Source: RMDB library OK1LIB, as collected in RNAgym. An RNA of 177 nucleotides, treated with 2A3 and DMS and read out base by base. The RNA was probed in 150 mM KOAc, 10 mM MgCl2 and 150 mM bicine (pH 8.5) at 24 C.
RNA sequence: GGGAACGACUCGAGUAGAGUCGAAAACACUGAACCUUAUCAUUUAGAGGAAGGAGAAGUCGUAACAAGGUUUCCGUAGGUGAACCUGCGGAAGGAUCAUUGUCGAAACCUGCACAGCAGAACGACCACUGUCUGGACGAUUCGUCGUCCAGACAGUAAAAGAAACAACAACAACAAC
Reactivity to 2A3 in 0.01 (KOAc 150mM, MgCl2 10mM, bicine 150mM(pH8.5), 24C), signal-to-noise 3, nucleotides 027 to 126: c070a010c010u020g000a000a040c000c000u090u160a210u140c080a140u180u100u180a020g030a040g030g060a040a050g040g020a030g000a220a000g010u110c070g000u040a040a020c010a110a030g010g010u010u010u000c000c000g000u030a030g000g020u160g300a140a230c000c000u020g030c000g080g000a000a000g020g040a060u100c030a210u010u010g040u090c040g040a080a040a090c000c000u060g070c130a240c010a300g000c040a040g000a030a000c000g040a040c030c030
Reactivity to DMS in 0.01 (KOAc 150mM, MgCl2 10mM, bicine 150mM(pH8.5), 24C), signal-to-noise 1, nucleotides 027 to 126: c130a180c040u010g030a300a100c060c000u000u000a010u000c050a040u040u000u110a150g020a030g020g020a060a010g020g060a130g000a170a070g020u000c010g000u000a060a080c120a050a010g060g000u000u000u000c060c000g030u000a000g020g040u060g000a060a080c050c000u000g000c040g000g000a030a000g000g000a030u020c020a050u000u000g030u000c200g000a040a010a030c110c000u010g010c020a120c130a060g000c000a090g010a060a030c030g020a010c150c170
The 2A3 profile rests on 1,044 reads. The DMS profile rests on 1,456 reads. 2A3 adducts were read by reverse transcription with SuperScript II with manganese.